[RMDB]
RNA sequence: GGGAACGACUCGAGUAGAGUCGAAAAGAUAUGGAGCGUGAUGAGCGCGUCCCAUGGUCGGAAACGACCAUGAACCGAACUACGCUCGCACGCUCCUAAGUCAAACGCCCUCGUUCGCGAGGGCGAACAGCUUCUAUUUGUUCGCAAAUAGAAGCUGAAAAGAAACAACAACAACAAC
Reactivity to 2A3 in 0.01 (KOAc 150mM, MgCl2 10mM, bicine 150mM(pH8.5), 24C), signal-to-noise 4, nucleotides 027 to 126: g000a010u020a020u060g010g000a010g000c010g010u050g050a300u110g010a160g000c230g050c120g100u030c000c000c000a010u000g020g000u000c010g000g020a040a020a030c010g010a010c010c000a000u000g000a000a020c090c060g090a170a110c100u280a150c300g010c010u000c010g000c000a000c000g000c000u000c000c000u010a000a010g000u000c000a000a030a050c010g000c000c010c000u000c000g030u060u050c300g000c020g110a010g000g030g000c010g000a000a000
Reactivity to DMS in 0.01 (KOAc 150mM, MgCl2 10mM, bicine 150mM(pH8.5), 24C), signal-to-noise 4, nucleotides 027 to 126: g000a030u000a230u010g010g000a010g000c000g010u000g000a080u000g020a040g010c000g010c300g000u000c060c060c010a010u000g010g000u000c000g000g000a060a060a070c000g000a010c010c010a010u000g000a110a070c200c250g000a050a070c080u000a110c120g020c000u000c020g000c020a020c010g000c010u010c000c000u000a010a040g010u000c050a070a110a210c010g000c000c000c010u000c010g000u010u020c200g030c010g000a000g000g000g010c010g000a000a040

About this RNA: The record gives the reactivity of an RNA of 177 nucleotides to 2A3 and DMS. For DMS, 4,079 sequencing reads were counted. For 2A3, 9,596 sequencing reads were counted.